[RMDB]
RNA sequence: GGGAACGACUCGAGUAGAGUCGAAAACUCGUUUUGCUUCGGCAAAACGAGAAAGUUUACUGAGCAUGAUGAAAUGAUGCUCAAAAUGAUUACUCUGAAGAAAGUCGCAGAUCUUCGGAUCUGCGACGCCCUAUAGAUUCUUCGGAAUCUAUAGGGCAAAAGAAACAACAACAACAAC
Reactivity to DMS in 0.01 (KOAc 150mM, MgCl2 10mM, bicine 150mM(pH8.5), 24C), signal-to-noise 3, nucleotides 027 to 126: c000u000c000g010u000u000u000u000g010c000u010u020c210g030g000c000a000a000a000a010c000g000a010g010a040a050a150g020u010u010u010a120c300u000g000a010g030c000a010u000g020a160u020g010a130a100a190u010g010a020u000g020c000u010c000a030a020a040a060u000g000a130u000u000a110c090u000c040u000g010a080a130g010a090a110a140g000u000c000g010c000a020g010a010u000c000u000u000c200g010g020a010u000c000u010g000c000g000a000c010
Reactivity to 2A3 in 0.01 (KOAc 150mM, MgCl2 10mM, bicine 150mM(pH8.5), 24C), signal-to-noise 4, nucleotides 027 to 126: c000u000c010g000u010u000u000u010g000c000u020u000c080g070g010c000a000a010a000a000c000g000a000g000a010a000a000g020u030u060u090a160c090u020g010a000g000c000a000u030g060a080u070g090a260a080a050u280g040a060u010g050c000u020c000a040a080a010a020u070g020a030u080u130a090c050u030c040u140g080a070a070g060a100a270a020g040u010c010g000c020a000g000a010u000c000u040u090c240g070g000a010u010c010u000g000c000g000a000c010

The record gives the reactivity of an RNA of 177 nucleotides to DMS and 2A3. Conditions: 150 mM KOAc, 10 mM MgCl2 and 150 mM bicine (pH 8.5), 24 C. It was measured as part of the RMDB library RFMREP. 2A3 is a SHAPE reagent: it acylates the 2'-hydroxyl of flexible nucleotides of all four kinds.